[RMDB]
RNA sequence: GGGAACGACUCGAGUAGAGUCGAAAAGAUUUAACAAGUGGUCGAUACGCAGAUGCGUUCUGGAAUCUCCGUACCGCCAGUCCUGUUUACAUGUAGUGUAUAGGUCUCUUGCGCGGACCUCUUGUGAAUUUGUGUAGACCUUCGGGUCUACACAAAUAAAAGAAACAACAACAACAAC
Reactivity to 2A3 in 0.01 (KOAc 150mM, MgCl2 10mM, bicine 150mM(pH8.5), 24C), signal-to-noise 3, nucleotides 027 to 126: g030a040u090u110u150a120a000c020a000a000g010u010g030g000u000c040g070a090u030a110c010g020c030a010g000a070u090g050c070g140u170u110c090u140g090g070a070a060u000c020u060c070c030g030u020a030c000c020g020c000c010a000g000u030c000c010u060g030u090u100u040a030c040a040u070g200u300a100g100u040g030u040a050u040a060g010g010u000c020u000c000u130u050g040c040g010c140g040g000a000c000c000u020c000u020u000g020u020g020a000
Reactivity to DMS in 0.01 (KOAc 150mM, MgCl2 10mM, bicine 150mM(pH8.5), 24C), signal-to-noise 4, nucleotides 027 to 126: g000a090u010u000u020a110a040c030a030a010g000u000g000g020u020c040g010a150u010a110c010g000c230a020g010a040u020g020c080g000u050u020c070u000g010g010a250a070u010c010u000c180c020g000u020a070c160c030g010c030c160a050g000u010c020c000u000g010u000u020u010a000c020a070u020g020u030a070g000u000g000u000a030u020a030g010g010u010c050u010c110u020u010g010c070g020c190g000g000a060c000c000u000c010u000u000g010u000g020a120